Chemical mapping of a 207-nucleotide RNA with 2A3.
It was measured as part of the RMDB library OK3TST.
Conditions: 150 mM KOAc, 10 mM MgCl2 and 150 mM bicine (pH 8.5), 24 C.
Reactivities are rounded to 0.1 and cut off at 0 and 3.
RNA sequence: GGGAACGACUCGAGUAGAGUCGAAAAUCUUUUAGGCCAGGAGCUACAUCUUCUAGUUCUUAUUAUCUUACAUAAAAUCUUCUAGGGUACUGAGUCUACAGCAGGCAACUCAUACAUAUUUGCUCAAUGAGUGGACACAUAGAUGAAUAAAUGAAUGGUUGAUAAGCGAGUUCGCUCGCUUAUCAACAAAAGAAACAACAACAACAAC
Reactivity to 2A3 in 0.01 (KOAc 150mM, MgCl2 10mM, bicine 150mM(pH8.5), 24C), signal-to-noise 1, nucleotides 027 to 156: u030c000u000u070u020u270a010g010g000c010c010a010g040g040a000g030c030u050a090c060a050u030c030u070u090c010u050a030g000u120u000c050u000u030a120u090u120a090u040c030u030u100a010c000a090u220a060a110a040a130u000c030u040u000c000u040a120g120g140g040u080a120c050u080g040a040g080u030c030u000a050c010a060g030c000a000g010g030c030a030a020c030u040c090a010u080a170c060a000u170a120u050u070u090g040c050u060c030a060a060u040g000a030g080u080g040g060a030c030a000c030a170u080a010g100a140u050g160a160a020u080a120a060a040u190g130a050a040u130g070